[RMDB]
RNA sequence: GGGAACGACUCGAGUAGAGUCGAAAACUCCAUUUCGAUGGAGGGAGCUCCUAAGUCGAGGCUUCGUUGUCAGUCUCGGGUAUCGGAAACGAUAUCUCUAGCGUGGACUUGGAUUUACGAAGCCCUCGAUAUGGAAUUUAUACCGAUUCGUCGGUAAGACACUCACAUUAUUCGUAAUGUGAGUGUCAAAAGAAACAACAACAACAAC
Reactivity to DMS in 0.01 (KOAc 150mM, MgCl2 10mM, bicine 150mM(pH8.5), 24C), signal-to-noise 2, nucleotides 027 to 156: c030u010c000c000a000u000u000u030c240g020a030u010g010g010a040g010g020g010a120g020c070u000c010c000u000a080a290g000u020c030g020a030g010g010c020u000u000c010g020u000u010g020u000c030a080g020u000c020u000c000g020g000g010u000a010u010c010g000g010a170a160a280c050g020a000u000a020u010c010u000c050u020a090g040c130g000u020g040g020a030c010u000u000g030g040a150u010u000u000a070c060g020a030a020g020c090c000c000u000c000g010a050u000a200u000g010g010a080a080u010u000u000a130u010a030c010c000g010a090u000u010c280g000u000c010g000g050u000a040a170
Reactivity to 2A3 in 0.01 (KOAc 150mM, MgCl2 10mM, bicine 150mM(pH8.5), 24C), signal-to-noise 7, nucleotides 027 to 156: c000u000c010c000a020u100u170u120c230g120a020u020g000g010a010g030g060g020a040g040c050u010c030c010u040a120a040g020u010c000g000a000g000g010c000u000u000c000g010u010u020g020u020c020a010g010u000c000u000c000g000g000g000u000a000u000c000g020g020a090a050a050c010g000a000u000a010u010c080u010c130u190a100g120c080g180u250g020g010a010c000u080u140g130g000a040u210u200u150a000c000g000a000a000g000c060c010c000u000c000g000a000u000a030u030g020g030a030a020u130u230u070a170u140a040c010c000g010a010u040u070c230g060u010c000g120g000u040a060a040
The record gives the reactivity of an RNA of 207 nucleotides to DMS and 2A3.
Reactivities are rounded to 0.1 and cut off at 0 and 3.